[RMDB]
RNA sequence: GGGAACGACUCGAGUAGAGUCGAAAAACGGUUGAGCAAAUGAUGUUUGACCUAGAGGUUGAACCGUUGGCUGCUCCAGAGGUACUGUUGAGGAUUGAGAAAUUGGUUUCAGUUGAGAAAAUGCGGACGCGAAUAAAAUCUUCGGAUUUUAUUCGCGAAAAGAAACAACAACAACAAC
Reactivity to 2A3 in 0.01 (KOAc 150mM, MgCl2 10mM, bicine 150mM(pH8.5), 24C), signal-to-noise 1, nucleotides 027 to 126: a000c130g040g000u030u040g000a020g030c000a010a040a070u220g070a110u080g070u010u000u030g000a000c000c000u000a000g010a070g190g000u030u110g040a040a040c020c040g050u070u050g070g000c040u090g120c000u000c000c050a040g010a030g030g000u130a010c000u020g050u070u050g020a050g030g030a090u060u140g050a030g030a020a080a090u030u120g050g080u150u050u060c080a050g000u000u030g120a070g130a060a100a110a030u190g060c070g030g020a010
Reactivity to DMS in 0.01 (KOAc 150mM, MgCl2 10mM, bicine 150mM(pH8.5), 24C), signal-to-noise 2, nucleotides 027 to 126: a110c040g000g020u010u020g020a010g040c030a060a070a090u000g040a110u010g010u000u010u040g010a050c040c010u000a130g010a120g020g010u010u000g020a030a050c080c020g000u000u000g010g010c080u000g020c040u000c070c030a030g000a110g000g040u040a040c090u020g000u000u020g000a080g010g000a080u020u000g000a130g010a000a030a030u010u040g000g060u000u000u010c080a090g040u010u010g000a130g010a070a040a080a100u010g000c100g030g010a200